[RMDB]
Structure probing data (2A3 and DMS) for a 177-nucleotide construct. Conditions: 150 mM KOAc, 10 mM MgCl2 and 150 mM bicine (pH 8.5), 24 C.
RNA sequence: GGGAACGACUCGAGUAGAGUCGAAAAGGCGAUCUAGGCGGGGGCAGGGUGAAGCGGUGCGAAAGCGCCGUGGAGGCCCGCAGGGGUGUUGAUGUGCAAAUCGCUCCUCUGACCCCCGUCUAGGGGUCUAUUAACACGCUUUCGAGCGUGUUAAUAGAAAAGAAACAACAACAACAAC
Reactivity to 2A3 in 0.01 (KOAc 150mM, MgCl2 10mM, bicine 150mM(pH8.5), 24C), signal-to-noise 9, nucleotides 027 to 126: g080g020c030g020a050u030c000u000a000g010g000c010g000g000g000g010g010c080a080g010g010g010u080g020a010a000g000c000g000g000u010g000c000g060a100a040a020g000c000g000c000c000g000u010g000g010a030g080g150c000c000c000g000c000a000g000g010g000g010u010g030u170u300g040a020u030g100u140g100c060a100a130a030u010c000g000c010u000c000c000u010c000u010g120a150c000c000c000c000c000g000u000c000u000a000g000g000g000g000u000
Reactivity to DMS in 0.01 (KOAc 150mM, MgCl2 10mM, bicine 150mM(pH8.5), 24C), signal-to-noise 6, nucleotides 027 to 126: g000g010c010g020a080u010c000u000a010g030g000c000g020g010g000g010g010c280a050g020g000g020u010g000a300a170g000c000g000g000u000g020c020g010a100a090a180g010c010g010c000c000g010u000g010g000a280g010g010c000c000c010g000c030a030g010g000g000g010u010g000u020u040g010a000u010g010u040g010c270a070a110a030u000c000g010c000u000c000c010u000c000u010g010a300c000c010c000c000c000g000u000c000u010a000g000g000g000g000u000
For DMS the reverse transcriptase was MarathonRT. For 2A3 the reverse transcriptase was SuperScript II with manganese.